[RMDB]
RNA sequence: GGGAACGACUCGAGUAGAGUCGAAAAGAUAUGGAGGCCGUGGAGUAAAGUGCGUUGAUCUACACGUAACAUCCAUCGGAAACGAUGGUGGUGUAGGGAGCACGAUACUCCACGGCCUCCUAAGUCACUUCGAUACAGAGUUCGCUCUGUAUCGAAGAAAAGAAACAACAACAACAAC
Reactivity to DMS in 0.01 (KOAc 150mM, MgCl2 10mM, bicine 150mM(pH8.5), 24C), signal-to-noise 2, nucleotides 027 to 126: g010a050u000a300u000g020g010a010g000g030c010c010g090u000g020g020a000g010u010a020a060a300g000u000g030c000g030u010u040g000a060u020c020u020a000c020a020c010g020u000a010a010c240a040u020c010c000a000u000c000g000g010a160a140a180c010g000a010u010g010g010u010g020g000u000g000u020a000g000g000g000a030g000c000a040c000g020a300u000a010c000u010c010c000a000c010g010g000c000c000u010c010c000u000a000a060g030u000c060a300
An RNA of 177 nucleotides, treated with DMS and read out base by base. Reactivities are rounded to 0.1 and cut off at 0 and 3. Conditions: 150 mM KOAc, 10 mM MgCl2 and 150 mM bicine (pH 8.5), 24 C. For DMS, 2,010 sequencing reads were counted.